[RMDB]
RNA sequence: GGGAACGACUCGAGUAGAGUCGAAAAGAAAGAAAGAAAUUGGCAAAUGAAGAAUUGAUUAAUUUAUGCUUAACCACUGAUGAACAGUGUUGACAAAACAUCUCCGCUUAUUAUCUGAUGCCAUAAACGUGUUGUUGAACUUCGGUUCAACAACACGAAAAGAAACAACAACAACAAC
Reactivity to 2A3 in 0.01 (KOAc 150mM, MgCl2 10mM, bicine 150mM(pH8.5), 24C), signal-to-noise 2, nucleotides 027 to 126: g080a000a080a010g010a040a040a000g070a030a040a090u050u030g000g000c040a000a030a200u030g020a040a110g040a130a070u200u010g030a040u110u090a020a030u050u090u030a170u140g020c000u050u050a000a020c080c000a000c010u000g020a060u220g060a270a100c070a000g000u020g030u010u030g060a050c000a050a010a020a000c050a070u040c010u030c010c000g000c130u090u090a070u030u000a110u070c030u000g000a080u190g000c010c000a000u100a130a160a000
Reactivity to DMS in 0.01 (KOAc 150mM, MgCl2 10mM, bicine 150mM(pH8.5), 24C), signal-to-noise 1, nucleotides 027 to 126: g000a060a080a100g010a070a120a140g030a000a220a080u000u000g000g000c000a040a100a100u070g000a010a110g000a010a110u050u040g000a230u010u010a110a130u100u000u000a000u070g000c130u000u010a040a120c230c000a030c040u000g000a150u000g000a060a040c070a030g000u000g000u000u090g000a130c060a060a010a030a010c110a000u010c000u000c200c300g030c130u000u030a010u030u000a090u000c000u000g080a100u030g010c070c000a130u000a040a100a100

The record gives the reactivity of an RNA of 177 nucleotides to 2A3 and DMS. The DMS profile rests on 803 reads. The RNA was probed in 150 mM KOAc, 10 mM MgCl2 and 150 mM bicine (pH 8.5) at 24 C.